RNA sequence: GGGAACGACUCGAGUAGAGUCGAAAAUUUAAACGAGUCCGGGGCUCUAGUGCCGCUCGACUAGAGCCCUGUCAGUUAUGGACCACGAGCAGUCCAUGUAAAAAUAAAAUAAAUAAACUUGGCGUUCGUGCCGGGAAAAGAAACAACAACAACAAC
Reactivity to 2A3 in 0.01 (KOAc 150mM, MgCl2 10mM, bicine 150mM(pH8.5), 24C), signal-to-noise 3, nucleotides 027 to 135: u030u030u030a050a030a020c030g000a010g030u020c020c000g010g000g000g000c000u000c000u000a010g000u010g090c070c060g050c100u100c070g030a000c000u000a000g000a000g000c020c000c000u000g000u010c000a000g020u000u210a080u210g030g010a010c080c000a020c040g010a010g020c030a010g020u040c000c000a010u050g060u150a030a060a070a040a060u300a130a180a100a000u300a130a200a110u300a040a190a030c010u020u060g010g000c010g030u030u040c020g000u090g000c000c000g000g000g010a060
Reactivity to DMS in 0.01 (KOAc 150mM, MgCl2 10mM, bicine 150mM(pH8.5), 24C), signal-to-noise 2, nucleotides 027 to 135: u080u060u020a060a060a090c040g010a110g000u010c030c010g020g010g000g020c000u000c000u000a000g000u000g080c150c070g030c060u040c050g020a130c010u030a040g010a000g040c000c000c010u000g010u040c110a240g030u040u070a100u020g000g020a030c070c050a160c060g000a050g020c060a140g000u020c020c030a050u000g010u050a000a020a030a080a040u200a080a070a100a050u110a160a040a080u180a070a100a030c020u040u030g000g010c110g020u020u000c060g050u000g000c100c150g040g140g000a060

The record gives the reactivity of an RNA of 155 nucleotides to 2A3 and DMS. Reactivities are given for positions 27 through 135. Conditions: 150 mM KOAc, 10 mM MgCl2 and 150 mM bicine (pH 8.5), 24 C. 2A3 adducts were read by reverse transcription with SuperScript II with manganese.